[RMDB]
RNA sequence: GGGAACGACUCGAGUAGAGUCGAAAAACGAGUUCGCUCGUAUAAGUGGGGUCUUCGUUGAAACCCUCCGAGCAUCGAUCUGUACUGAAGCCUCCACGGUACAGGGAGCUCGUGGGUGGAGAAGACGGAGGCACCCGUGCGGCCCGUUCGCGGGCAAACAAUUCUAAGUGUUCGCACUUAGAAUUGUAAAAGAAACAACAACAACAAC
Reactivity to DMS in 0.01 (KOAc 150mM, MgCl2 10mM, bicine 150mM(pH8.5), 24C), signal-to-noise 1, nucleotides 027 to 156: a050c000g030a030g000u000u010c240g030c000u010c030g080u020a120u000a040a100g020u010g000g010g000g000u010c020u000u000c060g030u000u030g010a220a240a090c010c010c010u000c110c040g000a020g040c020a240u000c130g000a070u000c000u010g000u020a030c020u000g000a040a140g020c020c010u000c010c000a300c030g000g010u000a010c010a010g010g010g000a040g000c040u000c000g020u000g010g000g000u050g010g000a090g000a090a160g020a090c070g020g040a040g050g040c010a030c010c000c020g040u020g000c080g000g030c000c010c030g020u000u030c270g010c000g000g000g000c000a020a060
Reactivity to 2A3 in 0.01 (KOAc 150mM, MgCl2 10mM, bicine 150mM(pH8.5), 24C), signal-to-noise 5, nucleotides 027 to 156: a010c010g000a010g020u080u070c110g050c100u010c000g070u080a140u100a240a110g120u190g010g090g020g030u010c020u010u000c020g150u100u020g020a030a020a020c000c010c010u050c150c090g000a000g010c010a020u300c000g000a010u000c000u000g000u000a000c010u020g070a190a070g010c000c010u010c000c000a020c010g000g000u000a000c000a000g000g000g000a000g000c000u000c010g000u030g000g000g020u010g000g010a020g000a010a010g010a030c040g010g000a000g000g000c000a030c010c000c010g030u070g060c080g120g030c000c030c000g010u030u030c180g020c030g040g000g000c050a040a070
The record gives the reactivity of an RNA of 207 nucleotides to DMS and 2A3.
For 2A3 the reverse transcriptase was SuperScript II with manganese.
For DMS, 2,958 sequencing reads were counted.
The RNA was probed in 150 mM KOAc, 10 mM MgCl2 and 150 mM bicine (pH 8.5) at 24 C.
High DMS reactivity at an A or C suggests that its Watson-Crick edge is free.
Reactivities are given for positions 27 through 156.